An RNA of 177 nucleotides, treated with DMS and 2A3 and read out base by base. The RNA was probed in 150 mM KOAc, 10 mM MgCl2 and 150 mM bicine (pH 8.5) at 24 C.
[RMDB]
RNA sequence: GGGAACGACUCGAGUAGAGUCGAAAAAGUUUAGAUUUCGAUCUAAACUAGACCACUAAGAGGAUGACGAGUGACUACCACGCAUCUAGUAGAAUGCGCCCAGCUGUGAGCAGUUCGCUGCUCACAAAUACACUUUAAGUUUCGACUUAAAGUGUAUAAAAGAAACAACAACAACAAC
Reactivity to DMS in 0.01 (KOAc 150mM, MgCl2 10mM, bicine 150mM(pH8.5), 24C), signal-to-noise 9, nucleotides 027 to 126: a040g000u000u000u000a000g000a020u000u000u020c170g010a020u000c000u000a000a000a000c000u000a060g010a190c030c020a110c130u010a080a100g010a100g000g010a060u000g010a080c060g010a120g010u000g010a090c090u010a070c080c060a120c050g010c030a010u000c020u000a100g010u000a080g000a080a050u000g000c070g010c020c010c020a120g020c170u000g010u000g000a010g010c000a010g010u000u010c230g020c000u000g000c000u000c000a000c000a010a060
Reactivity to 2A3 in 0.01 (KOAc 150mM, MgCl2 10mM, bicine 150mM(pH8.5), 24C), signal-to-noise 9, nucleotides 027 to 126: a000g010u020u000u010a010g000a020u060u040u110c230g050a010u000c000u010a000a000a000c000u000a010g030a040c010c020a020c060u070a100a060g050a050g200g010a060u060g030a050c040g020a020g080u060g040a070c040u070a060c040c050a040c050g010c010a010u010c020u030a030g030u000a020g050a220a050u050g010c020g030c020c010c010a040g040c090u050g000u010g010a000g000c000a010g010u020u100c190g040c090u000g000c000u000c000a000c000a000a000